Conditions: 150 mM KOAc, 10 mM MgCl2 and 150 mM bicine (pH 8.5), 24 C. An RNA of 177 nucleotides, treated with DMS and read out base by base. The DMS profile rests on 669 reads. It was measured as part of the RMDB library OK2TST.
RNA sequence: GGGAACGACUCGAGUAGAGUCGAAAAGCGCGCUCCCUGCAGCUGACUCCCAAGGAGGUUAGACUGAUGCACCUGCGCAGCCUGAGCAGCACCGCAAAACCUCCUACCGCUUCGGAUGGCAAGACGAAUAUGCGAUCACGUUCGCGUGAUCGCAUAUAAAAGAAACAACAACAACAAC
Reactivity to DMS in 0.01 (KOAc 150mM, MgCl2 10mM, bicine 150mM(pH8.5), 24C), signal-to-noise 1, nucleotides 027 to 126: g000c010g030c070g010c050u010c030c010c000u000g040c020a080g000c010u000g000a100c150u000c010c000c020a240a010g040g040a040g000g000u000u020a130g050a130c180u010g010a080u000g000c010a170c250c080u020g000c020g000c040a140g000c030c080u000g000a210g000c090a040g000c010a080c070c060g020c060a050a090a030a030c000c000u010c000c020u000a090c180c060g000c040u000u010c070g020g030a060u000g010g010c030a150a040g000a120c150g000a130